[RMDB]
RNA sequence: GGGAACGACUCGAGUAGAGUCGAAAAGCCCAUAUGUUCGCAUAUGGGCAAAAGCAGAUCUGAGCAUGCGAGCUCUCUGCGACAAAAGUCAACGGAAUAAAAAAACACGUCACUUCGGUGACGUGAACGUACAAUCCUAGUUCGCUAGGAUUGUACGAAAAGAAACAACAACAACAAC
Reactivity to 2A3 in 0.01 (KOAc 150mM, MgCl2 10mM, bicine 150mM(pH8.5), 24C), signal-to-noise 5, nucleotides 027 to 126: g010c010c000c000a010u010a000u000g010u000u050c210g000c110a000u010a000u010g000g010g000c020a070a010a000a020g000c000a000g010a060u080c090u230g010a000g000c020a050u230g160c130g130a060g010c020u000c000u000c000u000g000c000g010a020c040a030a200a020a020g110u120c050a070a040c100g110g080a150a090u260a190a090a020a010a000a010a010c010a000c000g000u000c000a010c010u050u090c240g080g000u030g000a000c000g000u000g000a000a000
Reactivity to DMS in 0.01 (KOAc 150mM, MgCl2 10mM, bicine 150mM(pH8.5), 24C), signal-to-noise 4, nucleotides 027 to 126: g000c010c000c000a020u000a010u000g010u000u010c230g050c000a030u000a000u000g000g000g030c000a000a010a050a150g000c000a010g000a070u010c150u010g010a030g010c000a100u020g010c180g020a110g000c010u000c010u000c000u000g000c000g000a080c210a030a060a070a090g000u000c080a040a130c120g010g000a060a070u060a020a010a070a090a050a040a140c000a010c010g010u000c000a010c000u000u020c160g010g010u000g000a010c000g020u000g010a010a050